[RMDB]
RNA sequence: GGGAACGACUCGAGUAGAGUCGAAAAUUAAAGGAGGAGGAGGAGUGUGUGUCUUCCCAGCUGCUGAGUAGAACCUCCGCACACACGCGAAAGCUACGAGCAGCAGCAGUGCGGAAUCGGUGAAAAAGUUCCUUUUAGAGUUCGCUCUAAAAGGAACAAAAGAAACAACAACAACAAC
Reactivity to DMS in 0.01 (KOAc 150mM, MgCl2 10mM, bicine 150mM(pH8.5), 24C), signal-to-noise 4, nucleotides 027 to 126: u010u010a060a080a100g010g010a090g010g000a070g020g000a120g000g000a090g020u000g030u000g010u010g010u010c090u000u020c010c010c000a200g010c030u000g000c010u010g000a090g010u000a040g000a080a090c120c050u000c030c020g010c010a070c070a110c170a110c200g000c020g000a040a170a090g000c000u000a020c070g010a120g010c050a030g010c090a050g030c050a110g020u000g000c040g010g010a040a050u010c120g000g000u010g000a050a050a050a060a180
Reactivity to 2A3 in 0.01 (KOAc 150mM, MgCl2 10mM, bicine 150mM(pH8.5), 24C), signal-to-noise 2, nucleotides 027 to 126: u100u040a040a020a050g040g030a020g040g010a030g000g010a030g030g000a110g020u020g030u000g010u010g030u060c030u020u020c020c010c000a030g030c000u070g000c010u040g020a020g090u040a030g030a060a030c010c020u010c000c010g000c010a030c000a000c000a020c050g000c020g040a100a020a040g000c010u020a020c140g080a050g070c000a000g010c010a000g000c000a010g060u050g040c040g030g000a040a080u150c050g030g010u100g080a090a000a000a000a070